An RNA of 177 nucleotides, treated with 2A3 and DMS and read out base by base. It was measured as part of the RMDB library OK2TRN. Reactivities are given for positions 27 through 126.
RNA sequence: GGGAACGACUCGAGUAGAGUCGAAAAAGACGGGACACCAGUUUUAGCGCUUAUAACGCAAGAAUCUAUCAACUGGAAUAUUCGCGGAAAUGUCAACGAAGUAUUAGCGCGUGGAGCAAAAACUAAAAUUAUGGUGCGUAUUCGUACGCACCAUAAUAAAAGAAACAACAACAACAAC
Reactivity to 2A3 in 0.01 (KOAc 150mM, MgCl2 10mM, bicine 150mM(pH8.5), 24C), signal-to-noise 1, nucleotides 027 to 126: a000g050a050c040g000g010g010a000c020a050c090c010a010g020u000u070u020u050a000g000c000g030c010u160u100a080u060a240a080c050g050c030a000a060g070a070a150u010c040u090a160u060c070a060a010c090u010g000g080a000a050u090a040u050u090c080g000c000g080g050a090a120a020u090g040u060c010a030a010c050g010a070a000g050u130a060u130u030a050g120c030g000c070g030u000g030g130a070g010c050a010a090a000a090a090c100u180a140a040a020
Reactivity to DMS in 0.01 (KOAc 150mM, MgCl2 10mM, bicine 150mM(pH8.5), 24C), signal-to-noise 2, nucleotides 027 to 126: a070g010a060c070g040g010g010a160c180a180c030c020a020g010u000u000u000u000a140g010c090g030c030u020u000a110u000a120a120c060g010c080a110a090g000a100a110u000c140u000a030u000c170a040a070c070u020g000g010a090a090u000a160u000u010c060g010c150g020g010a050a050a040u000g000u010c070a060a000c120g010a070a090g010u000a050u010u010a020g000c100g010c030g000u020g000g020a100g020c070a090a040a060a090a050c090u000a030a020a100